[RMDB]
RNA sequence: GGGAACGACUCGAGUAGAGUCGAAAAACUAUGGGCGCAGCGUCAUUGACGCUGACGGUACAGGCCAGACUAUUAUUGUCUGGUAUAGUGCAACAGCAGAACAAUUUGCUGAGGGCUAUUGAGGCGCCUAUGGUCGUAAAUUCGUUUACGACCAUAGAAAAGAAACAACAACAACAAC
Reactivity to 2A3 in 0.01 (KOAc 150mM, MgCl2 10mM, bicine 150mM(pH8.5), 24C), signal-to-noise 9, nucleotides 027 to 126: a000c080u110a120u120g050g050g050c020g000c010a010g000c000g010u020c100a300u030u300g000a000c010g000c000u000g020a010c000g010g020u050a040c020a010g140g000c000c000a000g000a000c020u030a060u300u030a090u250u220g000u000c000u000g000g000u000a030u030a010g020u050g040c050a120a080c000a040g020c000a000g050a120a060c090a220a270u100u090u060g000c010u010g010a080g020g070g000c010u010a040u050u160g060a040g020g070c020g070c000
Reactivity to DMS in 0.01 (KOAc 150mM, MgCl2 10mM, bicine 150mM(pH8.5), 24C), signal-to-noise 9, nucleotides 027 to 126: a090c040u010a050u010g010g000g020c020g020c010a030g010c000g000u000c010a190u010u010g010a030c020g020c030u000g000a030c040g040g020u010a060c070a150g010g000c000c000a010g000a010c000u010a110u010u020a130u030u010g000u000c000u000g010g010u000a000u000a020g010u000g020c060a080a150c020a020g000c010a020g010a070a170c270a100a110u020u010u000g010c010u010g010a140g010g000g000c020u000a090u010u010g000a130g010g010c060g010c090
An RNA of 177 nucleotides, treated with 2A3 and DMS and read out base by base. Conditions: 150 mM KOAc, 10 mM MgCl2 and 150 mM bicine (pH 8.5), 24 C. For 2A3 the reverse transcriptase was SuperScript II with manganese. DMS adducts were read by reverse transcription with MarathonRT. Source: RMDB libraries RFM100 and RFMREP, as collected in RNAgym. High DMS reactivity at an A or C suggests that its Watson-Crick edge is free.